[RMDB]
RNA sequence: GGGAACGACUCGAGUAGAGUCGAAAAUUAAACCUUCCAUCCAUCCAAUAAGACUGACUCAGUCAAUAAGGAUGGAUGGAGGAUCGCAAUAAGACUGAGUCAGUCAGAAAAGCGGAAACGCAAAAAACAACUCUAAGUGAUUCGUCACUUAGAGUUGAAAAGAAACAACAACAACAAC
Reactivity to DMS in 0.01 (KOAc 150mM, MgCl2 10mM, bicine 150mM(pH8.5), 24C), signal-to-noise 3, nucleotides 027 to 126: u010u010a120a110a260c050c000u000u000c000c000a010u000c010c000a020u000c000c020a170a120u010a090a100g010a020c000u010g010a050c020u000c010a020g010u000c000a120a100u010a060a070g000g010a010u000g000g010a000u000g010g020a000g000g000a050u030c140g010c170a110a090u000a070a110g020a020c000u010g010a020g000u000c000a010g000u000c000a120g000a050a040a100a080g010c000g000g000a040a080a130c030g000c010a000a040a070a070a070a140